[RMDB]
Conditions: 150 mM KOAc, 10 mM MgCl2 and 150 mM bicine (pH 8.5), 24 C. This 207-nucleotide RNA was probed chemically with DMS and 2A3.
RNA sequence: GGGAACGACUCGAGUAGAGUCGAAAACCUGGGUGGAGACAUUUAGGAGUUGGGUGAUCCCGGCGGUGGCACCGACGCCUGUCGGCCGGAUGUAACGGGGUGCCGAGAAUACGUGGGUAGGUCGUGGGGCCGACAUGUAUGCUCAGCUGACGGCGAGGGAAUAUUGGUGUUUCGAUAUCAGUAUUCCAAAAGAAACAACAACAACAAC
Reactivity to DMS in 0.01 (KOAc 150mM, MgCl2 10mM, bicine 150mM(pH8.5), 24C), signal-to-noise 3, nucleotides 027 to 156: c030c010u000g010g010g030u000g000g000a150g020a080c060a110u000u000u000a080g020g010a090g020u000u000g010g000g030u000g010a100u000c020c010c020g030g020c040g020g020u010g020g000c040a130c030c040g020a090c030g020c040c050u010g030u000c020g020g020c000c010g000g000a100u000g020u020a070a150c070g000g000g010g010u000g020c020c020g000a050g010a050a060u000a030c020g050u000g010g010g020u000a120g030g050u000c030g000u000g020g010g030g020c010c010g030a050c030a020u030g000u000a010u000g000c020u000c020a110g010c040u010g010a120c050g000g000c030g010a150g010
Reactivity to 2A3 in 0.01 (KOAc 150mM, MgCl2 10mM, bicine 150mM(pH8.5), 24C), signal-to-noise 2, nucleotides 027 to 156: c000c000u030g030g010g000u040g040g070a100g010a010c030a060u090u080u090a030g000g040a020g000u050u030g000g000g000u030g010a010u090c040c010c010g020g010c020g000g030u020g000g000c000a000c020c000g050a010c010g000c000c000u030g020u040c010g020g000c000c000g010g010a010u040g000u080a050a030c030g020g000g040g010u000g000c000c000g000a020g020a040a030u050a020c020g010u020g010g060g060u040a060g000g020u070c020g040u070g000g090g000g000c010c000g010a010c000a000u000g010u030a050u010g010c020u000c040a040g030c020u030g030a030c010g020g010c000g000a050g010
Reactivities are given for positions 27 through 156.